[RMDB]
RNA sequence: GGGAACGACUCGAGUAGAGUCGAAAAUGUCUGCCUCUUGGUCAUGUCCAGUAGGAAGGGAGGUAUCACCCCUCUAGACCAAGCCCUUCAGUGGCACCAGAACAUUGGCCCCUCUCACUGGUCCUCUCUGCCCUUCUGCCUGCCCUCUUAGAGCGGCGCAUUUAGGAACAUUCGUGUUCCUAAAUGCAAAAGAAACAACAACAACAAC
Reactivity to DMS in 0.01 (KOAc 150mM, MgCl2 10mM, bicine 150mM(pH8.5), 24C), signal-to-noise 1, nucleotides 027 to 156: u000g000u010c010u000g040c010c010u000c020u000u000g000g030u000c010a140u010g000u010c030c040a130g040u010a120g020g010a090a050g050g020g000a120g020g040u010a050u020c110a110c040c020c000c010u000c020u000a110g020a070c020c000a050a090g000c020c000c010u000u000c050a130g030u000g010g030c040a070c040c030a080g010a070a060c050a160u000u000g020g030c050c020c020c040u000c010u000c090a060c050u000g010g010u000c030c020u000c010u000c000u010g010c020c020c020u000u000c020u000g040c050c000u000g000c030c010c030u010c070u000u000a100g010a090g020c050g000g030c080
Reactivity to 2A3 in 0.01 (KOAc 150mM, MgCl2 10mM, bicine 150mM(pH8.5), 24C), signal-to-noise 3, nucleotides 027 to 156: u070g000u010c030u080g050c030c040u120c040u030u070g010g010u020c040a080u080g050u050c010c060a060g050u100a050g140g070a020a010g040g040g000a050g090g050u140a300u180c140a170c000c010c000c010u010c040u040a050g030a040c010c020a010a070g000c020c010c010u090u090c060a090g000u100g090g030c060a070c050c020a050g050a150a070c020a130u040u100g050g010c020c030c000c030u010c010u010c020a080c030u030g000g010u030c000c000u010c000u000c010u010g050c010c000c000u060u030c010u050g000c000c000u010g010c000c000c000u050c020u040u110a020g000a000g020c040g010g000c000